[RMDB]
RNA sequence: GGGAACGACUCGAGUAGAGUCGAAAAGCAAUCGCGCAUCAAGGAUAUCGCCUCGCUGCAGGCCGGCCGCGACAACCAGUUGAUCGGCUACGGCCUGAUCGUCGGUCUGCAGGGGUCCGGCGAUGGCCGCACCCUCGUCCUUCGGGACGAGGGUGCGAAAAGAAACAACAACAACAAC
Reactivity to 2A3 in 0.01 (KOAc 150mM, MgCl2 10mM, bicine 150mM(pH8.5), 24C), signal-to-noise 2, nucleotides 027 to 126: g060c100a090a080u130c060g010c010g000c000a120u050c120a070a130g080g010a040u020a020u070c000g000c000c000u020c050g170c070u000g000c020a000g000g000c000c010g010g000c090c030g150c050g160a040c030a120a100c110c120a080g070u060u050g080a010u020c000g000g000c020u070a060c280g080g000c000c000u010g000a000u000c010g000u000c000g000g000u000c000u010g010c000a000g000g020g020g010u000c030c030g000g000c000g020a000u000g000g000c000
This 177-nucleotide RNA was probed chemically with 2A3. For 2A3, 825 sequencing reads were counted. Reactivities are rounded to 0.1 and cut off at 0 and 3.